[RMDB]
RNA sequence: GGGAACGACUCGAGUAGAGUCGAAAAAAAGAUAUGGACGUAACAGAGCUGCAAGGUCGCGUUGAAAUUUCUCGGAAACGAGAAAUGGAGCGACCAACCAGCGACGAAGUUACGUCCUAAGUCAAAAGACACCUACUAACUUCGGUUAGUAGGUGUCAAAAGAAACAACAACAACAAC
Reactivity to DMS in 0.01 (KOAc 150mM, MgCl2 10mM, bicine 150mM(pH8.5), 24C), signal-to-noise 1, nucleotides 027 to 126: a030a080a000g000a000u030a300u000g000g000a010c020g080u000a030a020c020a060g020a280g000c000u000g000c030a020a300g020g020u000c000g000c000g000u000u000g000a090a060a000u000u000u000c020u000c000g020g000a020a020a130c030g000a020g030a000a000a010u000g000g020a200g070c000g010a020c000c020a000a180c300c000a000g000c000g000a080c240g070a100a100g020u000u000a000c000g000u000c000c020u000a010a020g000u000c060a000a130a140a090
Source information:
An RNA of 177 nucleotides, treated with DMS and read out base by base. The data come from the RNA Mapping Database (RMDB), library TTRDES. The RNA was probed in 150 mM KOAc, 10 mM MgCl2 and 150 mM bicine (pH 8.5) at 24 C. The DMS profile rests on 704 reads. High DMS reactivity at an A or C suggests that its Watson-Crick edge is free.